Background: An RNA of 207 nucleotides, treated with 2A3 and read out base by base. The reactions ran in a buffer of 150 mM KOAc, 10 mM MgCl2 and 150 mM bicine (pH 8.5), at 24 C. Source: RMDB library OK3TST, as collected in RNAgym.

[RMDB]
RNA sequence: GGGAACGACUCGAGUAGAGUCGAAAAAGAUAAGAUCCAGCUUUCCAUGGAAAAUAUAGGAAGGGGCCUUUUGGUUGCUGAGCAGAAAAAAACUAGCAAAUGUUCACUAUACAACUCCUUUCUGGUCUCAGCAGCCUCCUAACUGCUUCUGUGUCCACCAGUCAUAAUGAUUCGUCAUUAUGACUGGAAAAGAAACAACAACAACAAC
Reactivity to 2A3 in 0.01 (KOAc 150mM, MgCl2 10mM, bicine 150mM(pH8.5), 24C), signal-to-noise 3, nucleotides 027 to 156: a000g080a070u210a110a050g040a080u020c030c000a010g060c050u050u050u010c030c020a060u030g030g030a060a110a220a090u150a090u170a160g010g060a020a030g020g000g040g060c020c030u000u160u090u060g020g000u000u020g000c000u000g000a020g000c000a000g090a010a000a020a000a000a000a040c130u090a050g090c050a030a110a160u050g030u140u130c080a040c070u100a050u090a300c100a130a090c070u110c020c010u050u020u000c030u040g120g050u030c000u000c010a000g000c000a000g000c010c000u050c000c000u070a080a080c020u040g000c000u090u060c010u080g130u050g080u070c000c050a060